[RMDB]
RNA sequence: GGGAACGACUCGAGUAGAGUCGAAAAUUCCCCUAUUUCGAUAGGGGAACACCUGCGGGCGGCUCGCAGUUCCGACUUCGUCCUCCUCUGAGUCAAAGGGCGAUAGGCCUCGGUUCGCCGAGGCCAAGAUUUAAGACGUAUUCGUACGUCUUAAAUCAAAAGAAACAACAACAACAAC
Reactivity to DMS in 0.01 (KOAc 150mM, MgCl2 10mM, bicine 150mM(pH8.5), 24C), signal-to-noise 8, nucleotides 027 to 126: u000u000c000c000c000c000u000a000u000u000u010c150g010a020u000a010g010g000g010g010a010a010c110a090c120c010u000g000c040g010g000g020c110g010g020c050u000c020g010c060a060g000u000u000c020c010g010a100c120u010u000c020g010u010c010c010u000c070c050u000c100u010g000a100g010u010c100a090a130a050g000g010g010c020g010a050u010a080g010g010c000c000u000c000g010g000u000u010c200g020c000c000g000a020g010g000c000c000a010a020
Reactivity to 2A3 in 0.01 (KOAc 150mM, MgCl2 10mM, bicine 150mM(pH8.5), 24C), signal-to-noise 7, nucleotides 027 to 126: u010u000c010c010c000c000u010a020u030u120u080c190g100a010u010a000g000g000g000g000a000a010c030a040c010c010u020g020c050g030g030g020c080g050g030c060u040c030g010c010a010g000u040u010c020c010g070a060c070u040u020c020g020u010c000c010u010c020c020u100c080u170g080a040g050u040c030a100a070a010g020g010g010c010g010a020u060a080g010g000c000c000u000c000g000g050u030u040c220g010c050c000g000a000g000g000c000c000a000a000
About this RNA:
Conditions: 150 mM KOAc, 10 mM MgCl2 and 150 mM bicine (pH 8.5), 24 C. This 177-nucleotide RNA was probed chemically with DMS and 2A3. The DMS profile rests on 16,397 reads. 2A3 adducts were read by reverse transcription with SuperScript II with manganese. Reactivities are given for positions 27 through 126. DMS adducts were read by reverse transcription with MarathonRT. For 2A3, 23,259 sequencing reads were counted.